Chemical mapping of a 177-nucleotide RNA with DMS and 2A3. The data come from the RNA Mapping Database (RMDB), library TTRDEL. For 2A3, 3,520 sequencing reads were counted. High DMS reactivity at an A or C suggests that its Watson-Crick edge is free. The reactions ran in a buffer of 150 mM KOAc, 10 mM MgCl2 and 150 mM bicine (pH 8.5), at 24 C.

RNA sequence: GGGAACGACUCGAGUAGAGUCGAAAAGAUAUGGACUACGACAUGAUCAUGACUCGGAAACGAGUCAUCGAUCAACAGCGUACAUGUCCUAAGUCAAAACAGUUGCAGUCUUCGGACUGCAACUGAAGCCACACAUACAGUUCGCUGUAUGUGUGGCAAAAGAAACAACAACAACAAC
Reactivity to DMS in 0.01 (KOAc 150mM, MgCl2 10mM, bicine 150mM(pH8.5), 24C), signal-to-noise 2, nucleotides 027 to 126: g000a040u000a300u020g000g010a050c030u000a050c020g000a020c070a150u010g000a010u000c000a060u000g000a010c000u000c000g010g000a130a080a190c040g010a000g000u000c000a000u000c110g030a040u000c010a060a060c260a170g010c000g010u000a090c210a070u000g010u000c000c010u000a050a060g000u000c020a060a040a090a210c000a000g010u000u010g000c060a010g010u000c000u000u020c260g000g000a000c000u000g000c010a010a000c000u000g000a030a010
Reactivity to 2A3 in 0.01 (KOAc 150mM, MgCl2 10mM, bicine 150mM(pH8.5), 24C), signal-to-noise 2, nucleotides 027 to 126: g000a010u090a040u150g000g000a000c030u010a000c030g180a070c070a150u170g000a000u010c000a000u010g000a000c010u000c010g030g000a060a070a060c000g030a000g050u000c000a000u010c030g000a000u010c030a010a020c070a000g080c000g010u110a100c070a230u160g000u000c020c000u020a160a000g080u030c080a040a040a110a110c000a030g000u010u000g000c000a000g000u000c020u030u150c270g100g000a000c000u000g000c000a000a010c000u000g000a020a000